The record gives the reactivity of an RNA of 177 nucleotides to DMS and 2A3. DMS adducts were read by reverse transcription with MarathonRT.
RNA sequence: GGGAACGACUCGAGUAGAGUCGAAAAGAUAUGGACUAGUGGAGUCGUUGAUAAAUGUCGUUUGACGUUUAUCGGAAACGAUAAACCGAGACAUUUAUCAAUCGACGUUGAAACUAGUCCUAAGUCACAUUCGUCAAAUGUUCGCAUUUGACGAAUGAAAAGAAACAACAACAACAAC
Reactivity to DMS in 0.01 (KOAc 150mM, MgCl2 10mM, bicine 150mM(pH8.5), 24C), signal-to-noise 4, nucleotides 027 to 126: g010a040u000a300u010g010g000a020c000u000a000g010u000g000g000a050g010u000c000g030u000u000g000a010u000a000a010a000u000g000u000c000g000u010u010u020g010a190c300g000u000u000u010a000u000c000g030g000a140a080a200c000g010a000u000a000a000a000c000c020g000a120g000a000c000a010u000u000u000a010u000c000a000a010u010c030g010a010c000g010u000u020g010a120a180a010c000u000a010g000u000c000c000u000a010a080g010u000c030a260
Reactivity to 2A3 in 0.01 (KOAc 150mM, MgCl2 10mM, bicine 150mM(pH8.5), 24C), signal-to-noise 2, nucleotides 027 to 126: g020a000u080a020u170g020g000a000c000u010a000g000u010g020g030a010g010u030c000g000u000u000g000a020u000a000a010a000u010g000u020c060g070u170u260u300g080a080c070g000u030u000u000a010u010c020g000g010a120a090a000c020g000a000u020a000a000a000c010c000g030a030g000a030c010a020u010u000u010a000u000c010a000a020u250c050g000a000c000g010u040u010g000a010a000a010c010u000a000g000u000c000c000u010a010a010g030u000c000a000

For DMS, 4,432 sequencing reads were counted. Source: RMDB library TTRINS, as collected in RNAgym.